Structure probing data (2A3 and DMS) for a 177-nucleotide construct. The reactions ran in a buffer of 150 mM KOAc, 10 mM MgCl2 and 150 mM bicine (pH 8.5), at 24 C. Values are in units of 0.01, from 0 to 300, in steps of 10. 2A3 adducts were read by reverse transcription with SuperScript II with manganese. The 2A3 profile rests on 1,406 reads. The data come from the RNA Mapping Database (RMDB), library M2PK50. Values cover nucleotides 27 to 126.

[RMDB]
RNA sequence: GGGAACGACUCGAGUAGAGUCGAAAAUCAAGCCGUUUCGACGGCUUGAACACUUUAGAGUCGUGAGGGACUACGAUCCAGAGUACGGGAGGAACUCUAAGGCCUAGCCCUGCUUCGGCAGGGCUAAAAGCAUCCAUGUAUUCGUACAUGGAUGCUUAAAAGAAACAACAACAACAAC
Reactivity to 2A3 in 0.01 (KOAc 150mM, MgCl2 10mM, bicine 150mM(pH8.5), 24C), signal-to-noise 1, nucleotides 027 to 126: u020c010a010a000g000c020c000g000u040u030u100c160g120a020c000g000g000c000u020u010g000a000a000c010a000c020u000u010u090a020g000a010g000u000c020g010u040g060a140g040g040g000a040c060u110a070c260g130a160u090c040c010a020g020a020g090u050a020c040g010g010g060a100g020g000a050a040c000u020c030u040a080a070g050g030c010c010u010a000g000c020c000c000u010g000c000u020u010c090g060g000c000a020g040g020g040c020u010a000a000
Reactivity to DMS in 0.01 (KOAc 150mM, MgCl2 10mM, bicine 150mM(pH8.5), 24C), signal-to-noise 3, nucleotides 027 to 126: u000c010a000a000g030c020c010g070u010u000u020c220g010a020c010g010g010c010u000u000g000a020a060c110a080c020u000u010u000a110g010a050g000u000c020g000u010g000a170g000g010g000a120c090u020a080c160g000a140u000c050c050a080g010a100g020u010a070c090g000g010g000a080g010g010a080a050c070u010c070u010a060a070g040g000c070c060u000a000g000c010c000c000u000g010c010u010u010c210g020g010c010a010g020g000g010c020u000a000a030